Source: RMDB library OK2TRN, as collected in RNAgym. The record gives the reactivity of an RNA of 177 nucleotides to 2A3 and DMS. For 2A3, 10,380 sequencing reads were counted. For 2A3 the reverse transcriptase was SuperScript II with manganese.
[RMDB]
RNA sequence: GGGAACGACUCGAGUAGAGUCGAAAAGAGCGACUUAAUAUUAGAUCGUCGCGAUCUAAAUAGUCCGACACGCUGUCGCGGGGCAGCACCUCCCGGGAAAGGGCCCUUGGUCCGAAUUCGAAAGAAAACCAGUAGUAUGAUUCGUCAUACUACUGGUAAAAGAAACAACAACAACAAC
Reactivity to 2A3 in 0.01 (KOAc 150mM, MgCl2 10mM, bicine 150mM(pH8.5), 24C), signal-to-noise 7, nucleotides 027 to 126: g070a010g050c130g010a010c010u100u140a120a040u140a260u290u040a030g000a030u020c020g190u150c150g060c150g210a000u000c010u010a010a030a090u030a030g000u020c030c030g020a020c030a010c110g000c010u000g000u040c030g050c100g290g060g010g000c000a010g010c000a030c000c030u020c010c010c000g010g020g010a090a110a060g010g000g020c010c000c030u070u200g040g000u010c010c000g000a030a080u090u090c020g050a070a070a080g080a020a090a020
Reactivity to DMS in 0.01 (KOAc 150mM, MgCl2 10mM, bicine 150mM(pH8.5), 24C), signal-to-noise 7, nucleotides 027 to 126: g000a150g010c120g020a020c000u000u010a090a100u010a130u010u000a000g010a010u000c010g010u010c270g010c100g010a010u000c000u000a010a020a170u000a020g010u000c030c010g010a110c150a120c140g010c020u000g010u000c020g020c260g000g000g000g000c010a020g010c030a140c120c060u000c010c010c010g000g000g000a050a130a160g010g000g010c020c000c260u000u010g040g020u000c010c010g010a060a130u010u010c040g010a090a070a130g000a060a040a130